[RMDB]
RNA sequence: GGGAACGACUCGAGUAGAGUCGAAAAUGUCUGUCAGGGCACAUGUGUAGGAGGUGGUCCCUACGCACAAGGCGAAGAUGCCAGGAUGCUCUCAUUGGUCAGCAAGACCGAGAUAGAGGAAGACAGCUUCAGACAGAUGCCCACAGAAGAUGAAUACCAAUGACGUCAAAUUCGUUUGACGUCAUUGAAAAGAAACAACAACAACAAC
Reactivity to 2A3 in 0.01 (KOAc 150mM, MgCl2 10mM, bicine 150mM(pH8.5), 24C), signal-to-noise 4, nucleotides 027 to 156: u170g020u000c020u010g030u070c060a100g030g020g000c010a010c010a070u040g010u000g000u010a020g020g040a050g000g100u160g050g030u100c010c000c000u020a020c030g020c010a050c050a090a110g030g010c060g070a110a090g030a090u260g000c000c010a020g070g020a110u100g040c000u000c000u000c020a090u040u070g000g020u010c020a070g060c160a300a050g010a010c020c050g000a010g000a010u150a030g040a020g030g060a090a010g040a080c040a050g000c040u070u090c030a010g010a060c000a000g030a060u060g020c000c000c010a040c030a030g110a110a030g060a090u250g060a090a080u200a180c120
Reactivity to DMS in 0.01 (KOAc 150mM, MgCl2 10mM, bicine 150mM(pH8.5), 24C), signal-to-noise 1, nucleotides 027 to 156: u010g000u000c010u000g000u010c030a070g030g000g060c030a100c100a100u000g030u010g020u000a020g010g000a090g010g090u000g020g010u000c050c000c040u000a000c000g000c040a050c070a150a160g010g000c060g040a030a070g120a040u000g020c000c000a090g050g040a300u030g050c000u000c010u000c060a300u010u000g010g020u000c000a130g040c230a190a220g010a020c000c000g000a020g040a180u010a050g000a070g000g010a120a090g010a020c020a050g030c060u000u000c010a220g010a050c000a090g040a050u010g000c010c010c000a150c070a100g000a080a090g030a140u000g010a210a080u030a160c050

Conditions: 150 mM KOAc, 10 mM MgCl2 and 150 mM bicine (pH 8.5), 24 C.
Structure probing data (2A3 and DMS) for a 207-nucleotide construct.
The 2A3 profile rests on 2,224 reads.